[RMDB]
An RNA of 177 nucleotides, treated with DMS and 2A3 and read out base by base.

RNA sequence: GGGAACGACUCGAGUAGAGUCGAAAAGGGUUGUUGUUCGCAACAACCCAAAGAAGCUCAUGAUGACGCAAACAACGGCGUCGCCCUGAGCAAACGGCGAAAAAACACGACCCUUCGGGGUCGUGAACCCUAUAGUGAACUUCGGUUCACUAUAGGGAAAAGAAACAACAACAACAAC
Reactivity to DMS in 0.01 (KOAc 150mM, MgCl2 10mM, bicine 150mM(pH8.5), 24C), signal-to-noise 3, nucleotides 027 to 126: g020g000g010u010u000g010u010u000g010u000u000c140g030c020a020a010c000a010a010c000c000c000a000a020a070g000a110a090g010c000u000c010a010u000g000a020u000g000a020c010g000c020a040a070a120c240a110a110c230g000g000c000g010u010c000g010c010c010c030u000g010a010g010c000a020a070a080c130g010g020c060g000a000a040a080a090a090a190c010a010c020g000a020c000c000c000u000u000c110g010g010g010g010u000c000g010u000g000a020a040
Reactivity to 2A3 in 0.01 (KOAc 150mM, MgCl2 10mM, bicine 150mM(pH8.5), 24C), signal-to-noise 3, nucleotides 027 to 126: g010g000g000u000u000g010u020u010g010u000u020c010g000c000a000a000c000a000a000c000c000c010a000a000a000g000a060a030g020c000u010c000a010u030g040a020u030g000a010c000g010c010a050a210a270c080a140a110c190g120g000c010g000u000c000g000c000c000c000u000g010a020g010c020a030a090a000c050g120g050c050g070a160a040a000a020a000a020c000a000c020g010a000c000c000c030u030u060c210g040g000g000g000u000c000g010u000g010a000a000